Annotation
This 207-nucleotide RNA was probed chemically with 2A3. Conditions: 150 mM KOAc, 10 mM MgCl2 and 150 mM bicine (pH 8.5), 24 C. The data come from the RNA Mapping Database (RMDB), library RNAMAK. Values cover nucleotides 27 to 156.

RNA sequence: GGGAACGACUCGAGUAGAGUCGAAAACGCUGGGUGGCACAAUGGCACUGGGUAGCUGAAGCGCGCACGGCUAUAAUCCAGUGAACUACCAUUGGAUCACCUGUGCUGAAGCGCGCACGGCAACCGAAAGGUGCGAAUGGGCGUAUUCGUACGCCAAAGUGCCUAACACGUUCGCGUGUUAGGCACUAAAAGAAACAACAACAACAAC
Reactivity to 2A3 in 0.01 (KOAc 150mM, MgCl2 10mM, bicine 150mM(pH8.5), 24C), signal-to-noise 1, nucleotides 027 to 156: c050g060c020u090g000g020g030u050g000g060c000a020c050a130a030u080g050g000c000a000c020u020g000g000g080u050a110g000c030u100g010a300a110g010c000g000c000g000c000a000c000g030g000c000u100a090u120a300a000u020c000c000a010g030u000g000a010a040c100u260a120c240c010a000u000u000g000g000a000u010c010a050c040c060u050g060u020g020c000u020g050a210a040g000c000g000c000g010c000a000c040g000g030c040a000a030c000c000g130a140a020a100g040g030u060g010c000g110a110a030u170g040g010g000c000g020u000a030u030u040c170g010u030a000c010g030c010c000a120a180